[RMDB]
The record gives the reactivity of an RNA of 177 nucleotides to 2A3 and DMS. The data come from the RNA Mapping Database (RMDB), library OK2TRN.
RNA sequence: GGGAACGACUCGAGUAGAGUCGAAAAGUACACGAUCGGCCAUAUCGAGGAUCGGCCGCGCUGCGUACGAGCGCGUACUAUAGAGUGACGAUCGCAGUCGAGGAUCGGCCGUAGGAUCCGCGUACUGAGGUGACGAGGAUUUCGAUCCUCGUCACCUAAAAGAAACAACAACAACAAC
Reactivity to 2A3 in 0.01 (KOAc 150mM, MgCl2 10mM, bicine 150mM(pH8.5), 24C), signal-to-noise 2, nucleotides 027 to 126: g020u020a010c050a000c080g040a030u040c030g030g000c040c010a050u080a050u080c030g000a020g080g010a050u020c030g020g000c080c000g020c020g010c000u090g040c030g080u080a060c060g020a080g030c160g010c010g020u000a030c050u040a040u140a140g150a020g110u050g020a020c000g030a020u030c040g000c140a030g150u100c000g000a040g060g070a110u130c020g010g010c040c000g000u010a070g150g000a040u000c100c000g070c010g020u020a020c000u100g090
Reactivity to DMS in 0.01 (KOAc 150mM, MgCl2 10mM, bicine 150mM(pH8.5), 24C), signal-to-noise 2, nucleotides 027 to 126: g010u000a050c040a210c000g000a070u000c010g020g020c020c010a080u000a090u000c020g030a060g020g000a070u000c050g030g000c250c000g010c040g020c000u000g000c220g010u010a080c120g010a180g010c140g010c040g000u000a020c050u000a130u010a070g000a070g000u000g000a090c000g000a040u000c010g000c070a120g000u000c000g000a070g000g030a040u010c120g020g010c020c060g000u000a080g010g000a070u000c100c030g000c050g010u000a030c020u000g010

Description: The reactions ran in a buffer of 150 mM KOAc, 10 mM MgCl2 and 150 mM bicine (pH 8.5), at 24 C.